[RMDB]
RNA sequence: GGGAACGACUCGAGUAGAGUCGAAAACGUAACAAUUAGGGUUCCCGGAAGAACCAACGGACGGGACAUCUGACGUACGGGCGACGCUGGACGCGGUGCGAUCAGACGUGCUCGCGUAGUUAUCCAGUAGUGUUGGUAGGUUCGCCUACCAACACUAAAAAGAAACAACAACAACAAC
Reactivity to DMS in 0.01 (KOAc 150mM, MgCl2 10mM, bicine 150mM(pH8.5), 24C), signal-to-noise 2, nucleotides 027 to 126: c060g000u000a070a070c150a090a110u000u000a060g000g010g010u000u000c000c010c030g000g000a160a190g000a100a050c100c200a110a090c050g000g050a300c030g040g030g040a040c070a030u000c010u010g000a030c080g000u000a040c010g000g010g050c020g000a060c090g000c090u010g000g010a120c020g000c000g030g000u000g000c010g000a070u000c090a010g000a090c050g020u000g030c000u000c040g010c040g000u010a060g020u010u000a050u000c020c000a220g020
Reactivity to 2A3 in 0.01 (KOAc 150mM, MgCl2 10mM, bicine 150mM(pH8.5), 24C), signal-to-noise 1, nucleotides 027 to 126: c000g020u060a000a100c080a220a220u170u150a130g010g000g110u010u020c000c060c000g050g010a040a060g020a060a020c090c090a080a030c030g040g000a000c000g000g030g010a010c020a080u000c000u000g010a000c000g010u060a000c040g100g070g000c030g020a020c010g050c080u050g030g080a000c010g010c060g090g000u110g000c000g090a250u030c030a000g120a110c040g020u030g000c020u020c020g050c000g000u030a080g020u000u080a050u090c010c030a060g100

Description
An RNA of 177 nucleotides, treated with DMS and 2A3 and read out base by base. The DMS profile rests on 1,298 reads. For 2A3, 1,241 sequencing reads were counted.